Source: RMDB library OK2TST, as collected in RNAgym. This 177-nucleotide RNA was probed chemically with DMS and 2A3. For DMS the reverse transcriptase was MarathonRT. The 2A3 profile rests on 3,998 reads. The DMS profile rests on 6,515 reads. High DMS reactivity at an A or C suggests that its Watson-Crick edge is free.
[RMDB]
RNA sequence: GGGAACGACUCGAGUAGAGUCGAAAACGGUGUAGCUUUUGCGGGCCCCGCGCUUGGUGUCGACGACGUCGUACAUGUAGGGGUUGGUCAUCGACGGGUCGUCACCCUCGUUGUGCCCGCGGCGGCGUACCUCUAUGACGUUCGCGUCAUAGAGGUAAAAAGAAACAACAACAACAAC
Reactivity to DMS in 0.01 (KOAc 150mM, MgCl2 10mM, bicine 150mM(pH8.5), 24C), signal-to-noise 3, nucleotides 027 to 126: c060g020g020u010g010u010a150g020c010u000u000u000u000g010c000g010g010g000c010c030c020c210g010c030g010c230u000u010g010g020u000g020u000c020g010a030c000g010a120c030g020u000c010g020u010a070c130a060u010g010u010a100g020g000g000g000u010u000g000g010u000c120a110u000c020g000a020c010g010g000g000u000c010g010u000c020a020c010c010c090u000c010g000u000u010g000u000g010c010c000c000g010c010g010g010c090g000g010c030g010
Reactivity to 2A3 in 0.01 (KOAc 150mM, MgCl2 10mM, bicine 150mM(pH8.5), 24C), signal-to-noise 2, nucleotides 027 to 126: c050g040g040u130g070u150a040g030c020u030u020u070u100g000c000g020g000g000c000c000c050c040g000c000g040c070u040u090g020g000u020g010u020c020g000a010c000g040a120c010g020u000c000g040u040a030c040a130u120g110u200a120g040g030g060g060u040u100g000g020u080c060a060u080c050g010a010c000g000g020g000u000c010g000u020c000a000c010c000c010u020c010g000u010u030g010u040g030c000c000c000g010c000g010g000c000g010g000c010g020